[RMDB]
RNA sequence: GGGAACGACUCGAGUAGAGUCGAAAAGAUAUGGAAGCGUUCUGAGCGCGAAUACAUCGGAAACGAUGUAUGAACGAACUACGCUCAGACGCUUCCUAAGUCAAAGCGGUUCGUUCGCGAACCGCAACUAAUCGACAUCGUUCGCGAUGUCGAUUAGAAAAGAAACAACAACAACAAC
Reactivity to 2A3 in 0.01 (KOAc 150mM, MgCl2 10mM, bicine 150mM(pH8.5), 24C), signal-to-noise 2, nucleotides 027 to 126: g040a020u090a020u170g000g010a020a020g010c000g140u300u140c040u000g010a000g030c020g010c000g060a040a040u010a000c000a010u010c010g030g040a070a050a040c010g000a010u030g010u020a020u010g010a060a040c110g040a060a030c100u200a040c300g000c000u010c000a000g000a000c010g000c000u000u010c000c000u000a000a000g000u000c020a030a150a090g040c000g000g000u010u010c010g030u010u150c300g020c000g140a000a000c000c000g030c000a010a000
Reactivity to DMS in 0.01 (KOAc 150mM, MgCl2 10mM, bicine 150mM(pH8.5), 24C), signal-to-noise 2, nucleotides 027 to 126: g000a090u000a300u000g000g000a010a020g000c000g000u020u010c000u000g000a010g010c000g010c050g000a140a030u000a000c010a000u000c000g000g000a120a110a170c000g010a010u000g000u000a000u000g000a200a150c140g000a100a080c170u000a090c020g000c000u000c000a020g000a020c020g010c000u010u000c000c000u000a010a050g000u000c020a080a120a130g000c000g000g010u000u000c010g000u000u000c170g000c010g050a000a020c000c000g040c000a020a020

An RNA of 177 nucleotides, treated with 2A3 and DMS and read out base by base. For 2A3, 2,866 sequencing reads were counted. DMS (dimethyl sulfate) methylates the pairing face of unpaired adenines and cytosines. For 2A3 the reverse transcriptase was SuperScript II with manganese. Reactivities are given for positions 27 through 126.